The data come from the RNA Mapping Database (RMDB), library TTRDEL. This 177-nucleotide RNA was probed chemically with 2A3 and DMS. For 2A3 the reverse transcriptase was SuperScript II with manganese. DMS adducts were read by reverse transcription with MarathonRT. The 2A3 profile rests on 1,873 reads. The DMS profile rests on 1,071 reads. The RNA was probed in 150 mM KOAc, 10 mM MgCl2 and 150 mM bicine (pH 8.5) at 24 C.

[RMDB]
RNA sequence: GGGAACGACUCGAGUAGAGUCGAAAAGAUAUGGAAAGCGAGGAUCUAUGAAGAGCAACAGCUCGGAAACGAGACAUGCUUGGAAGUAGGGAGCUUUCCUAAGUCAAAAGUGAGGUUCGCCUCACAAGUCCUCCAAAUGGUUCGCCAUUUGGAGGACAAAAGAAACAACAACAACAAC
Reactivity to 2A3 in 0.01 (KOAc 150mM, MgCl2 10mM, bicine 150mM(pH8.5), 24C), signal-to-noise 1, nucleotides 027 to 126: g000a000u060a010u150g030g000a020a030a000g010c030g120a300g060g000a030u010c000u010a020u300g040a030a070g010a000g060c020a020a140c040a170g020c000u000c000g000g000a040a070a010c030g000a010g030a000c030a100u150g020c010u000u010g010g020a090a030g000u010a010g020g000g000a000g020c000u000u010u030c000c000u000a080a020g060u040c050a090a000a000a120g000u020g000a040g000g060u000u140c250g120c050c010u000c000a010c020a010a020
Reactivity to DMS in 0.01 (KOAc 150mM, MgCl2 10mM, bicine 150mM(pH8.5), 24C), signal-to-noise 2, nucleotides 027 to 126: g010a040u000a300u010g000g000a000a020a020g010c000g000a050g030g000a020u010c000u000a000u020g000a300a070g000a010g000c000a010a030c260a160g020c000u010c010g000g080a090a090a170c000g000a010g000a050c120a130u000g010c010u000u000g000g000a060a170g010u000a000g000g000g000a020g010c000u000u000u000c000c010u000a020a050g000u010c050a000a020a090a040g000u000g010a000g000g000u000u010c290g000c000c000u000c000a010c010a020a050